[RMDB]
RNA sequence: GGGAACGACUCGAGUAGAGUCGAAAAGGCAGCAUACUAUUGCUCCACGUGGAGUAGCCAUAAGAUAUUCACACCUAAAGUGGACCCACGGGAUGAACACAACUUUGGGAGCACCGCCGGACACUUGAUUUCUCGAUGUAAGAAACUGAAAUGGGCAAAUAUGAGCAGAUUUCGAUCUGCUCAUAUUAAAAGAAACAACAACAACAAC
Reactivity to 2A3 in 0.01 (KOAc 150mM, MgCl2 10mM, bicine 150mM(pH8.5), 24C), signal-to-noise 3, nucleotides 027 to 156: g050g000c030a000g010c020a070u090a130c030u140a140u180u120g010c000u030c000c020a190c070g010u050g000g020a120g020u070a060g060c010c030a040u120a120a050g070a060u100a110u210u160c060a040c010a040c090c030u110a120a110a010g030u020g030g000a040c000c010c000a000c000g010g030g030a050u100g130a120a030c050a010c000a140a200c050u130u140u120g010g000g000a030g050c020a020c040c030g000c000c000g030g000a020c040a010c030u070u080g030a040u060u080u040c040u000c040g040a020u090g080u100a050a070g040a050a110a040c030u070g040a050a060a060u060g020g040g020c050a050
Reactivity to DMS in 0.01 (KOAc 150mM, MgCl2 10mM, bicine 150mM(pH8.5), 24C), signal-to-noise 2, nucleotides 027 to 156: g000g020c020a110g000c080a140u010a070c060u000a030u000u000g000c020u010c020c000a130c090g050u000g000g010a110g060u000a040g030c090c040a080u000a110a110g010a100u000a080u000u000c110a080c080a130c030c020u000a060a070a150g020u010g000g000a170c010c000c010a040c120g000g010g000a100u000g000a060a080c050a130c090a070a100c090u000u010u010g000g000g000a200g010c050a030c040c070g050c030c040g000g000a130c040a040c070u010u000g000a160u000u000u010c000u000c050g020a120u020g000u000a060a110g010a060a050a060c050u010g010a030a060a090u010g000g020g050c030a080

About this RNA:
Source: RMDB library OK3TST, as collected in RNAgym. An RNA of 207 nucleotides, treated with 2A3 and DMS and read out base by base. DMS adducts were read by reverse transcription with MarathonRT. The reactions ran in a buffer of 150 mM KOAc, 10 mM MgCl2 and 150 mM bicine (pH 8.5), at 24 C.